[RMDB]
RNA sequence: GGGAACGACUCGAGUAGAGUCGAAAAAAUUUGAAUAAGAGUGCUGGUUGGCCUCUUAACAAAAUUGGUAAAGCAGGUACUUAUUAUGAGUCUUUGUCAUAUGAGGAACAGGAUGAGUUGUAUGCGCUCACAAAGCGUAAUAUACUCCCUACUAUGAAACAGUACUCUAGUUCGCUAGAGUACUGUUAAAAGAAACAACAACAACAAC
Reactivity to 2A3 in 0.01 (KOAc 150mM, MgCl2 10mM, bicine 150mM(pH8.5), 24C), signal-to-noise 3, nucleotides 027 to 156: a000a000u180u120u030g040a050a040u060a040a010g020a010g040u200g040c030u060g080g100u170u120g060g000c010c010u010c000u020u030a020a000c010a010a040a060a080u090u110g040g070u150a060a030a030g060c040a050g000g070u060a040c020u060u070a070u160u090a080u280g040a020g060u070c070u080u170u100g090u030c030a030u080a070u130g030a060g070g010a100a030c060a070g050g010a050u130g010a050g000u000u000g010u070a020u020g000c000g000c020u050c050a060c070a060a080a000g010c000g000u010a220a040u020a000u000a020c000u000c010c000c000u020a090c040u040a080u100g020a090
Reactivity to DMS in 0.01 (KOAc 150mM, MgCl2 10mM, bicine 150mM(pH8.5), 24C), signal-to-noise 2, nucleotides 027 to 156: a100a110u010u000u000g020a220a210u000a050a050g020a050g040u010g060c000u020g010g010u010u010g030g020c020c000u000c020u000u000a030a190c060a070a020a060a090u000u010g010g020u010a070a080a060g010c060a090g010g040u000a090c040u000u000a070u000u010a080u000g020a070g010u000c090u010u000u000g010u010c010a040u000a060u020g000a050g040g010a090a070c060a060g010g020a130u010g010a080g020u000u000g000u010a040u000g040c000g000c000u000c060a160c300a070a110a040g020c010g020u000a020a010u000a060u000a040c030u000c000c010c000u000a100c060u000a090u010g010a210